[RMDB]
RNA sequence: GGGAACGACUCGAGUAGAGUCGAAAAAUCUGUACCUAUAGGCAAUUUGGGGACUCCCGGAACACAGGAUCUGGAGUAUAAGAACAACCAUGUCACCACUCUAGAGUUGACCUCUUCUUCUACAGGACAAUGAUUUGAAGUUCGCUUCAAAUCAUUGAAAAGAAACAACAACAACAAC
Reactivity to 2A3 in 0.01 (KOAc 150mM, MgCl2 10mM, bicine 150mM(pH8.5), 24C), signal-to-noise 4, nucleotides 027 to 126: a000u070c080u070g030u040a080c020c010u070a050u110a100g050g010c040a060a060u030u080u150g020g010g020g030a020c020u030c040c040c050g070g020a080a010c160a010c030a080g070g030a070u000c020u030g020g000a010g040u080a080u030a190a090g080a060a010c020a020a030c040c040a050u100g020u030c010a000c060c000a030c020u020c010u050a040g010a010g080u040u100g090a100c000c020u030c030u030u030c010u030u000c010u040a040c020a040g000g030a020
Reactivity to DMS in 0.01 (KOAc 150mM, MgCl2 10mM, bicine 150mM(pH8.5), 24C), signal-to-noise 4, nucleotides 027 to 126: a080u010c070u000g010u020a090c020c020u000a110u000a070g010g000c060a050a070u000u000u000g030g000g010g000a090c090u000c020c000c030g000g010a050a060c080a130c130a080g010g000a110u000c030u000g000g010a060g000u000a070u010a070a080g010a110a040c070a070a090c100c110a080u010g010u000c050a080c080c040a060c060u000c030u010a070g010a080g000u010u000g000a110c060c040u010c090u000u000c040u010u010c040u000a060c080a060g010g010a250
An RNA of 177 nucleotides, treated with 2A3 and DMS and read out base by base. Source: RMDB library OK2TRN, as collected in RNAgym. For 2A3, 4,491 sequencing reads were counted.